[RMDB]
RNA sequence: GGGAACGACUCGAGUAGAGUCGAAAAAGCGAGCGGCUCAUCGGGUAGCGCACGCUGAUCUUCUCGUUGACGAGCUUCGCGUACGCCUCGACGUGGCGCGCCUCGUCCAUGAUCUGCGCGGCCGCGAUCCCCUGCCACUAUUCGUAGUGGCAGGGGAAAAAGAAACAACAACAACAAC
Reactivity to 2A3 in 0.01 (KOAc 150mM, MgCl2 10mM, bicine 150mM(pH8.5), 24C), signal-to-noise 2, nucleotides 027 to 126: a020g040c050g030a020g000c020g020g000c030u030c060a120u130c010g010g010g150u120a050g020c010g000c030a030c050g010c040u040g000a070u040c050u110u030c060u020c040g090u140u190g000a010c030g000a010g000c020u230u210c010g020c030g010u020a100c010g030c020c100u140c110g300a300c030g060u090g050g040c020g000c010g010c010c000u040c000g020u000c020c000a090u160g020a030u020c030u070g000c010g020c000g050g000c030c020g040c000g010a050
Reactivity to DMS in 0.01 (KOAc 150mM, MgCl2 10mM, bicine 150mM(pH8.5), 24C), signal-to-noise 3, nucleotides 027 to 126: a060g020c050g020a100g020c010g010g020c030u000c070a160u000c100g010g010g050u010a090g000c030g010c030a070c050g000c030u000g010a080u000c070u000u010c060u010c070g030u020u000g000a020c020g000a040g000c220u010u000c000g030c020g010u000a030c000g020c030c040u020c220g020a050c020g020u000g020g040c030g010c040g010c300c020u020c000g000u010c000c110a050u010g010a030u000c050u000g020c060g000c020g010g000c010c040g020c020g010a070
Conditions: 150 mM KOAc, 10 mM MgCl2 and 150 mM bicine (pH 8.5), 24 C. Structure probing data (2A3 and DMS) for a 177-nucleotide construct. Reactivities are given for positions 27 through 126. The 2A3 profile rests on 2,016 reads. The DMS profile rests on 1,672 reads. 2A3 is a SHAPE reagent: it acylates the 2'-hydroxyl of flexible nucleotides of all four kinds. Reactivities are rounded to 0.1 and cut off at 0 and 3.